Chemical mapping of a 177-nucleotide RNA with DMS and 2A3. The RNA was probed in 150 mM KOAc, 10 mM MgCl2 and 150 mM bicine (pH 8.5) at 24 C. Values are in units of 0.01, from 0 to 300, in steps of 10. For DMS the reverse transcriptase was MarathonRT. The data come from the RNA Mapping Database (RMDB), library OK2TST.
RNA sequence: GGGAACGACUCGAGUAGAGUCGAAAAGGAAGGGGUUCAAGUUGAUUCCCAUUUGUGUUGGAGUUCUGAACUCCGACAAGGAGGCCUUUUUCGCCGAGAAACUUUACGACUACUUCGCAGACCCUUCUAAGCCACUUUUAUUCGUAAAAGUGGCUUAAAAAGAAACAACAACAACAAC
Reactivity to DMS in 0.01 (KOAc 150mM, MgCl2 10mM, bicine 150mM(pH8.5), 24C), signal-to-noise 5, nucleotides 027 to 126: g010g000a050a020g010g000g000g010u000u000c110a080a060g010u000u000g010a260u010u000c010c000c010a220u010u000u010g000u000g010u000u000g020g000a050g010u000u000c190u010g010a060a030c000u000c000c010g020a020c020a050a060g010g010a220g010g010c010c090u010u010u010u010u010c160g000c030c030g010a110g000a140a060a060c050u000u000u000a100c090g000a060c150u010a050c090u000u000c070g020c130a120g000a130c000c010c000u000u010c040
Reactivity to 2A3 in 0.01 (KOAc 150mM, MgCl2 10mM, bicine 150mM(pH8.5), 24C), signal-to-noise 1, nucleotides 027 to 126: g040g040a020a000g000g030g000g030u120u180c060a020a060g040u060u050g100a220u040u000c000c050c050a020u110u160u150g160u010g010u020u000g000g030a000g000u000u060c080u230g210a060a030c000u000c010c000g000a000c000a000a040g110g000a080g000g020c000c000u010u120u050u070u110c050g000c000c000g030a040g070a030a080a020c020u080u070u070a080c040g020a010c020u050a050c000u070u090c020g030c050a040g030a210c000c000c000u050u020c010

High 2A3 reactivity points to a flexible backbone, as in loops and unpaired stretches.